About this RNA
Structure probing data (2A3) for a 207-nucleotide construct.
[RMDB]
RNA sequence: GGGAACGACUCGAGUAGAGUCGAAAAUCCUAAGUCUCGCUGGGAUUUCGCUUUGAUCAUAUAGCAGCGUAUCGGAAACGAUACGCUUCCCUAUAUGGGAGCGAACGAAGGCGAGAUAUGGAAAAUGGCCCAUAUAUCUUCGGAUAUAUGGGCCAAAGCCAAGAAUCAGAUUCGUCUGAUUCUUGGCAAAAGAAACAACAACAACAAC
Reactivity to 2A3 in 0.01 (KOAc 150mM, MgCl2 10mM, bicine 150mM(pH8.5), 24C), signal-to-noise 2, nucleotides 027 to 156: u010c010c000u020a170a010g000u000c010u010c000g020c000u010g000g010g300a300u060u050u020c020g000c000u290u190u140g080a110u100c020a000u030a000u020a020g260c300a010g000c060g000u080a000u000c010g060g000a100a090a060c010g000a000u010a000c000g010c000u020u020c000c010c020u000a000u000a020u030g000g000g000a010g000c000g030a000a000c000g010a000a000g020g010c000g000a000g000a000u000a020u030g040g000a020a050a000a120u070g000g000c010c020c040a000u000a000u000a000u010c000u040u060c300g020g000a000u000a000u000a000u000g010g030g010c000c000a000a000a000
For 2A3 the reverse transcriptase was SuperScript II with manganese. Source: RMDB library RNAMAK, as collected in RNAgym. Reactivities are rounded to 0.1 and cut off at 0 and 3. For 2A3, 1,271 sequencing reads were counted.